[RMDB]
RNA sequence: GGGAACGACUCGAGUAGAGUCGAAAACAGCACAGCAACAAGUCCAGAGUCUCGCUGCAAUGGGCCAGAUGUUUAGGCUGACCACCACUAAAGAUGAUGUAAUCAGCAGUAAACUCCAGUUUGCUGAGCAGUAUGCUACCUUCGGGUAGCAUACUGCAAAAGAAACAACAACAACAAC
Reactivity to DMS in 0.01 (KOAc 150mM, MgCl2 10mM, bicine 150mM(pH8.5), 24C), signal-to-noise 1, nucleotides 027 to 126: c120a010g040c120a100c080a050g020c050a030a000c060a210a080g020u000c040c010a000g000a300g010u000c040u010c230g040c190u000g020c030a070a190u010g010g000g010c080c120a050g010a030u000g000u010u000u020a040g000g010c050u000g000a010c040c000a010c000c020a040c010u000a050a090a120g000a170u000g020a070u000g000u000a090a210u000c000a010g000c000a000g000u020a020a030a010c010u000c060c110a070g010u000u000u000g010c000u020g010a160
Reactivity to 2A3 in 0.01 (KOAc 150mM, MgCl2 10mM, bicine 150mM(pH8.5), 24C), signal-to-noise 1, nucleotides 027 to 126: c020a000g030c020a000c000a100g010c000a010a020c040a090a010g000u000c020c000a010g030a000g020u040c040u070c090g150c140u080g010c050a020a060u030g000g000g000c000c020a010g010a070u160g050u040u070u050a050g040g000c020u010g030a000c010c060a020c000c000a010c010u210a200a190a070g200a120u120g000a040u060g030u040a060a040u030c020a000g040c020a040g080u040a000a040a040c020u040c030c000a030g010u040u000u050g040c000u000g030a000